[RMDB]
Chemical mapping of a 177-nucleotide RNA with 2A3. Conditions: 150 mM KOAc, 10 mM MgCl2 and 150 mM bicine (pH 8.5), 24 C. It was measured as part of the RMDB library OK1LIB. For 2A3 the reverse transcriptase was SuperScript II with manganese.
RNA sequence: GGGAACGACUCGAGUAGAGUCGAAAAGUGUGUAGCGAGUGCAUGUGCAUUGGCGUGUGUUUGUGUGUGUGCCUGUGCAUUUUAAAGUGAAAUGUGCAUUAAUUAUGCACACAUAUUUCACUCAACCAGUGGUGCAUACCUUCGGGUAUGCACCACUAAAAGAAACAACAACAACAAC
Reactivity to 2A3 in 0.01 (KOAc 150mM, MgCl2 10mM, bicine 150mM(pH8.5), 24C), signal-to-noise 1, nucleotides 027 to 126: g060u150g010u070g050u010a030g110c050g050a100g010u050g050c020a030u100g000u030g010c000a010u000u080g130g000c030g060u070g010u000g000u130u090u010g080u000g000u000g000u010g000u010g000c010c000u010g000u100g020c000a010u000u000u020u180a170a090a020g090u120g070a000a000a000u010g000u000g000c000a000u000u110a110a040u190u220a150u080g000c000a000c000a000c010a010u010a030u300u030u020c000a000c020u010c000a020a050c090c000